[RMDB]
Source information:
Conditions: 150 mM KOAc, 10 mM MgCl2 and 150 mM bicine (pH 8.5), 24 C. An RNA of 207 nucleotides, treated with 2A3 and DMS and read out base by base. Reactivities are given for positions 27 through 156. DMS adducts were read by reverse transcription with MarathonRT. The data come from the RNA Mapping Database (RMDB), library OK3TST. For 2A3, 1,817 sequencing reads were counted.
RNA sequence: GGGAACGACUCGAGUAGAGUCGAAAAGAAAACACAACCUUCAGCAAGUGUUUCUUAACUGACAAGAAGAACAGAGUCGUGGAACCCAGGCUCAGUAACAACGAAUGUUCGUGCACAUUUCGUGAAAUUUGUCUGCAUGAAGGAGUCACAUUUGAGAGAGGACUAUACUAUUCGUAGUAUAGUCCUCAAAAGAAACAACAACAACAAC
Reactivity to 2A3 in 0.01 (KOAc 150mM, MgCl2 10mM, bicine 150mM(pH8.5), 24C), signal-to-noise 4, nucleotides 027 to 156: g000a000a020a000a010c010a000c020a000a190c030c020u170u130c060a050g040c100a210a120g010u000g020u030u020u000c010u030u050a110a090c060u110g010a020c030a140a000g140a090a020g040a120a020c040a050g020a010g020u020c030g020u000g000g120a110a080c030c020c010a010g000g030c010u030c030a050g070u100a010a070c100a040a050c070g060a090a040u130g010u140u100c040g020u070g050c030a020c010a060u110u170u090c120g020u090g080a100a100a070u120u070u080g050u020c020u030g020c030a030u020g040a030a030g050g010a020g010u040c020a040c030a150u140u210u200g090a100g000a010
Reactivity to DMS in 0.01 (KOAc 150mM, MgCl2 10mM, bicine 150mM(pH8.5), 24C), signal-to-noise 3, nucleotides 027 to 156: g000a040a050a060a040c040a060c040a100a140c060c050u010u000c120a130g020c020a070a170g020u000g010u000u010u000c030u000u000a080a240c050u010g010a110c020a060a060g020a100a130g000a110a130c040a090g010a040g030u000c010g020u020g000g020a080a120c030c000c010a130g000g030c010u000c030a100g000u000a060a100c060a130a070c010g030a040a050u000g050u000u000c130g020u000g020c090a110c020a040u000u010u000c010g030u010g020a080a070a070u000u000u000g000u000c040u000g020c010a110u000g030a040a060g030g030a170g030u000c040a090c110a110u000u000u000g000a120g000a220